[RMDB]
An RNA of 207 nucleotides, treated with 2A3 and read out base by base. The reactions ran in a buffer of 150 mM KOAc, 10 mM MgCl2 and 150 mM bicine (pH 8.5), at 24 C. It was measured as part of the RMDB library M2RFPK.

RNA sequence: GGGAACGACUCGAGUAGAGUCGAAAAGAAAGUUCAAGCAAGCUAGCCGGCAAGAAAGCAAACUUGACCACCAAGGAUAAAAGAGAUCUUAUCCAAGGAUGCAAAAGAUAAUCUCACUUUUGACACCAAAACAGGGAGUAGUUCGCUACUCCCUGAAGGUUAACCUCAACUUCGGUUGAGGUUAACCAAAAGAAACAACAACAACAAC
Reactivity to 2A3 in 0.01 (KOAc 150mM, MgCl2 10mM, bicine 150mM(pH8.5), 24C), signal-to-noise 1, nucleotides 027 to 156: g030a030a050a000g010u060u070c030a040a000g000c010a030a010g000c020u070a050g010c000c020g000g020c020a090a030g080a120a160a000g000c040a000a000a110c000u030u100g040a040c030c010a040c010c040a070a030g010g000a010u010a070a110a010a040g110a000g020a010u050c040u040u000a000u010c000c000a000a040g020g000a050u110g010c000a000a040a010a030g020a000u080a120a070u080c060u020c040a100c040u000u000u040u030g120a130c010a070c050c100a060a050a000a120c000a020g000g000g000a010g000u000a000g000u000u060c180g030c100u000a000c000u010c000c000c010u000g000a000a000